Source: RMDB library OK3TST, as collected in RNAgym. The record gives the reactivity of an RNA of 207 nucleotides to 2A3. 2A3 adducts were read by reverse transcription with SuperScript II with manganese. High 2A3 reactivity points to a flexible backbone, as in loops and unpaired stretches.
[RMDB]
RNA sequence: GGGAACGACUCGAGUAGAGUCGAAAAUGAAAAUGGCAUAAGAGGCUCCUUAUUGUACCGGGACAUAUAGUUUUGAAUGAAGUGUUCUUCUGUUUCAAGAUAGAUGGGAUGGUCGGUAAGUUCAUGUAGGACUUCCAUGGCAGAGUCUGCCAGAGUGGAAUCAUCACGGAUUCGUCCGUGAUGAUUCAAAAGAAACAACAACAACAAC
Reactivity to 2A3 in 0.01 (KOAc 150mM, MgCl2 10mM, bicine 150mM(pH8.5), 24C), signal-to-noise 2, nucleotides 027 to 156: u190g040a050a040a010a080u070g030g000c050a060u110a160a020g030a030g040g000c020u020c020c060u130u120a190u040u120g030u060a050c000c060g030g000g050a030c030a060u170a030u040a100g090u000u050u070u170g070a100a070u060g010a070a050g010u020g060u180u060c000u000u010c030u080g150u060u040u030c020a050a010g010a080u040a040g070a060u080g010g010g010a010u050g020g010u020c020g000g000u050a010a010g000u030u060c000a010u190g160u150a100g030g030a040c010u110u000c070c020a050u080g000g000c010a000g020a030g100u000c010u080g000c000c010a040g000a010g030u160g030